[RMDB]
RNA sequence: GGGAACGACUCGAGUAGAGUCGAAAAGAUAUGGAUCAUACCUCCUUUUGACGGCAACUCUCGGAAACGAGAGAAUUGCCGAUAAGGAGAUAUGAUCCUAAGUCAAACUGGCACUUCGGUGCCAGAAGUACUCUUAAGGCUUCGGCCUUAAGAGUACAAAAGAAACAACAACAACAAC
Reactivity to DMS in 0.01 (KOAc 150mM, MgCl2 10mM, bicine 150mM(pH8.5), 24C), signal-to-noise 2, nucleotides 027 to 126: g000a060u000a300u040g000g000a010u000c000a000u010a020c010c020u000c000c000u000u000u000u000g000a270c090g010g000c000a000a070c000u000c000u010c000g010g000a120a040a150c020g010a010g000a000g000a040a050u010u000g010c000c000g020a070u000a050a010g000g020a010g010a030u000a000u000g000a000u000c000c020u000a000a060g000u000c010a140a140a300c000u000g000g000c000a030c000u000u020c240g030g020u000g000c000c000a000g000a010a090
Reactivity to 2A3 in 0.01 (KOAc 150mM, MgCl2 10mM, bicine 150mM(pH8.5), 24C), signal-to-noise 2, nucleotides 027 to 126: g030a010u070a020u140g010g000a000u020c000a030u010a000c000c000u020c020c050u030u150u110u240g300a180c010g000g000c000a020a040c030u020c010u010c010g030g000a090a050a020c010g000a000g000a000g000a040a050u080u000g000c000c010g000a030u030a030a000g020g010a000g000a010u010a000u020g000a000u000c000c000u000a020a000g030u020c000a000a080a150c020u020g010g000c010a010c030u050u090c300g070g010u000g020c000c000a010g000a000a000